[RMDB]
RNA sequence: GGGAACGACUCGAGUAGAGUCGAAAACGAUGAGGGGAGAAGAGAAGUGGACAGGUGGGUCGAAGACGCCCGCCCCAUGGCGGACGCCCGUCGCCUGUUUGCAUGCGGGGGUCAGACCCCCUUACCGACGCAUAUAUCGUUUCGACGAUAUAUGCGUAAAAGAAACAACAACAACAAC
Reactivity to DMS in 0.01 (KOAc 150mM, MgCl2 10mM, bicine 150mM(pH8.5), 24C), signal-to-noise 2, nucleotides 027 to 126: c090g010a090u000g010a050g020g020g000g000a100g010a140a140g010a060g020a090a080g030u010g010g000a080c160a010g000g020u000g030g010g010u000c020g000a080a100g000a020c040g000c020c000c020g020c000c110c170c130a070u000g020g030c010g020g030a060c060g000c120c070c070g010u000c020g020c010c010u000g000u000u000u010g020c130a080u000g000c070g000g000g000g000g010u000c060a100g010a300c030c000c000c010c010u000u000a060c040c050g010
Reactivity to 2A3 in 0.01 (KOAc 150mM, MgCl2 10mM, bicine 150mM(pH8.5), 24C), signal-to-noise 1, nucleotides 027 to 126: c040g040a070u110g030a080g000g020g020g000a080g010a120a030g040a010g020a110a060g050u070g000g040a040c050a030g040g020u130g090g070g000u080c020g090a090a030g010a000c030g200c020c010c060g010c040c000c030c000a080u070g040g000c030g000g020a020c050g080c020c000c000g030u020c000g000c010c000u040g050u090u160u110g060c070a080u160g070c040g010g010g000g000g010u010c000a010g020a070c010c000c010c010c000u010u030a070c030c010g050